[RMDB]
RNA sequence: GGGAACGACUCGAGUAGAGUCGAAAAAAAUCUGCUCAUCUGGAAUCCCCAAGCAUCCGAUUACAGGCGAGCGCAGCCGGCGACCUCAGCAUCCGUGACAUCCACGUCAACAGUGCGCAAGGCACAGCAUAGCUAGUCGGUUCGCCGACUAGCUAUGAAAAGAAACAACAACAACAAC
Reactivity to DMS in 0.01 (KOAc 150mM, MgCl2 10mM, bicine 150mM(pH8.5), 24C), signal-to-noise 2, nucleotides 027 to 126: a030a080a090u010c060u010g030c000u010c040a080u010c030u000g020g010a080a080u000c050c080c000c060a120a090g010c070a040u000c110c030g000a060u000u000a090c130a030g010g000c080g010a020g020c040g010c070a110g000c050c040g000g000c030g000a050c040c000u000c060a090g030c040a070u020c000c040g020u010g000a130c040a050u020c120c110a080c130g000u030c020a020a110c080a050g050u010g050c030g020c140a030a120g000g000c000a020c110a180g000
Record summary:
The record gives the reactivity of an RNA of 177 nucleotides to DMS. The reactions ran in a buffer of 150 mM KOAc, 10 mM MgCl2 and 150 mM bicine (pH 8.5), at 24 C. The DMS profile rests on 895 reads. It was measured as part of the RMDB library OK2TRN.